[RMDB]
Source: RMDB library RNAMAK, as collected in RNAgym. Structure probing data (DMS and 2A3) for a 207-nucleotide construct. 2A3 adducts were read by reverse transcription with SuperScript II with manganese. High DMS reactivity at an A or C suggests that its Watson-Crick edge is free.
RNA sequence: GGGAACGACUCGAGUAGAGUCGAAAACGAUGUUUCCUUCGGGAAACAUCGAAAAACCGUAGGAAGUCGUGAAAGCGAUGAAGUAGGGUUCGAAAGAGCCCUAUGGAGCUUCACGCUUCCUAAACGGAAAAAACACCGCAAUUUCGAUUGCGGUGAACCCAGUAUCACAAUUCGUUGUGAUACUGGGAAAAGAAACAACAACAACAAC
Reactivity to DMS in 0.01 (KOAc 150mM, MgCl2 10mM, bicine 150mM(pH8.5), 24C), signal-to-noise 1, nucleotides 027 to 156: c050g000a030u000g110u030u000u000c000c000u020u000c300g050g050g000a030a000a000c000a000u020c020g010a030a060a090a070a070c000c010g010u000a000g020g010a020a070g020u020c060g050u020g020a070a040a050g030c000g000a180u020g020a220a300g030u000a020g000g020g010u000u000c000g020a150a060a200g000a000g000c020c000c020u000a000u010g010g000a230g000c000u000u000c000a010c040g020c000u000u000c000c000u000a000a050a090c000g010g020a000a050a080a080a110a070c000a020c010c000g000c000a020a020u000u000u010c280g020a170u000u000g020c020g000g000u000g000a000a100
Reactivity to 2A3 in 0.01 (KOAc 150mM, MgCl2 10mM, bicine 150mM(pH8.5), 24C), signal-to-noise 2, nucleotides 027 to 156: c010g000a010u000g020u000u000u020c000c000u030u060c130g040g000g000a000a000a020c000a000u000c000g000a000a000a010a000a000c000c000g000u010a000g010g020a000a000g080u300c040g010u030g070a180a070a070g030c000g180a300u020g010a010a000g000u000a000g000g010g010u000u000c000g020a080a080a060g000a010g000c000c020c000u000a000u000g000g010a000g000c020u000u000c000a000c000g000c000u000u010c000c000u000a000a000a000c000g000g080a090a060a000a070a020a050c010a000c090c000g000c010a010a010u050u070u160c220g160a020u020u000g000c000g000g010u000g000a000a000